RNA sequence: GGGAACGACUCGAGUAGAGUCGAAAAACCAGGCGCUGAACGCCUUCCUCAAUACCUGCCCCACCGGCAACGCCCUGCAACACGAGUUCGGCCCGCGCCUGCUGCCGCUGCUCGACGGCGGCGAGGAACGCUUUUAAAUCUUCGGAUUUAAAAGCGUAAAAGAAACAACAACAACAAC
Reactivity to DMS in 0.01 (KOAc 150mM, MgCl2 10mM, bicine 150mM(pH8.5), 24C), signal-to-noise 4, nucleotides 027 to 126: a110c110c030a090g010g020c020g010c070u000g020a080a210c130g010c020c010u000u000c020c020u000c090a110a060u010a080c120c030u000g020c070c020c020c040a080c100c040g010g010c030a040a060c100g010c020c020c020u000g010c070a060a060c090a120c050g000a040g000u010u000c060g000g000c000c030c020g020c100g000c020c020u000g020c060u000g010c020c010g000c020u000g020c020u010c090g000a090c050g000g010c010g010g020c000g000a040g010g000a170
Reactivity to 2A3 in 0.01 (KOAc 150mM, MgCl2 10mM, bicine 150mM(pH8.5), 24C), signal-to-noise 2, nucleotides 027 to 126: a030c010c020a040g000g010c020g000c090u140g070a160a030c040g000c000c000u040u050c010c000u090c030a060a090u140a260c030c010u040g040c000c010c010c000a070c010c030g020g000c020a050a040c040g010c010c030c000u030g020c050a080a020c020a030c120g060a030g050u090u040c020g020g010c000c010c010g050c010g030c010c010u060g050c040u090g000c000c000g000c030u020g000c030u100c170g180a220c000g060g000c000g000g000c000g020a010g000g000a050

An RNA of 177 nucleotides, treated with DMS and 2A3 and read out base by base. It was measured as part of the RMDB library OK2TST. The reactions ran in a buffer of 150 mM KOAc, 10 mM MgCl2 and 150 mM bicine (pH 8.5), at 24 C. Reactivities are given for positions 27 through 126. 2A3 adducts were read by reverse transcription with SuperScript II with manganese.